Structure probing data (DMS and 2A3) for a 177-nucleotide construct.
[RMDB]
RNA sequence: GGGAACGACUCGAGUAGAGUCGAAAAAGCGAGCGGUGGGAGCCGCUCGCCGCGCUUCUAAGUAAUCAUGCGCAAUAAUUUGUGGAGGGGUAAUAGGCUGGCCGAGCGCUGACGCUGCUUACUUUGCGUAGAGAAGAUUAUUCGUAAUCUUCUCUACAAAAGAAACAACAACAACAAC
Reactivity to DMS in 0.01 (KOAc 150mM, MgCl2 10mM, bicine 150mM(pH8.5), 24C), signal-to-noise 7, nucleotides 027 to 126: a100g010c000g000a020g010c010g010g030u000g010g060g000a240g010c010c000g020c000u000c000g020c010c050g010c060g010c050u000u020c100u020a070a100g010u010a090a060u010c110a070u010g020c030g000c030a150a070u040a070a080u010u010u000g020u010g000g000a100g000g000g000g010u010a060a080u010a070g020g010c020u000g000g000c030c030g000a100g010c050g010c030u000g000a080c080g010c030u000g010c050u010u010a060c050u010u000u000g010c220
Reactivity to 2A3 in 0.01 (KOAc 150mM, MgCl2 10mM, bicine 150mM(pH8.5), 24C), signal-to-noise 9, nucleotides 027 to 126: a000g000c000g000a000g000c010g010g020u040g020g100g020a040g030c000c000g000c000u000c000g000c000c000g000c000g000c000u100u050c040u170a150a150g050u090a150a110u110c060a070u140g010c000g000c010a000a040u240a100a060u100u130u180g060u080g030g040a050g010g020g010g000u030a070a070u080a120g080g000c030u030g030g000c020c020g020a030g000c050g000c020u040g010a030c030g010c040u050g000c020u070u050a090c000u050u040u060g040c080

2A3 adducts were read by reverse transcription with SuperScript II with manganese.